[RMDB]
RNA sequence: GGGAACGACUCGAGUAGAGUCGAAAAUCAAACUAAAAUGCUUCUUCUCAGCAAAGAAACAAUCAGUGAGGUGAAUAGAGAGCCUAAAGAAUGGGAGCAAAUUUUUUACCAUACACACAUCAGAUAGGUACCCUGAGUAAUUCGUUACUCAGGGUACAAAAGAAACAACAACAACAAC
Reactivity to 2A3 in 0.01 (KOAc 150mM, MgCl2 10mM, bicine 150mM(pH8.5), 24C), signal-to-noise 2, nucleotides 027 to 126: u060c010a040a010a050c040u180a090a080a000a040u090g000c010u000u010c030u040u030c030u000c010a050g030c030a000a130a040g090a070a140a010c060a050a050u300c060a010g030u000g090a010g020g010u010g020a050a020u120a030g090a020g000a020g050c010c020u130a110a080a050g180a080a010u080g000g000g060a080g100c060a040a080a150u100u070u000u000u040u030a030c000c000a020u080a090c060a010c030a030c000a140u170c020a020g060a200u060a060g040
Reactivity to DMS in 0.01 (KOAc 150mM, MgCl2 10mM, bicine 150mM(pH8.5), 24C), signal-to-noise 1, nucleotides 027 to 126: u000c060a070a110a220c140u030a090a020a130a100u010g000c010u000u000c020u000u000c010u000c080a080g060c140a070a000a050g000a030a030a040c070a050a090u010c060a060g050u000g020a170g000g010u010g010a120a060u000a070g010a200g000a150g000c000c020u000a060a060a050g030a060a050u000g000g020g000a050g000c060a040a030a030u010u000u000u000u000u000a100c000c020a060u000a020c090a060c100a080c080a010u000c060a060g000a080u000a090g000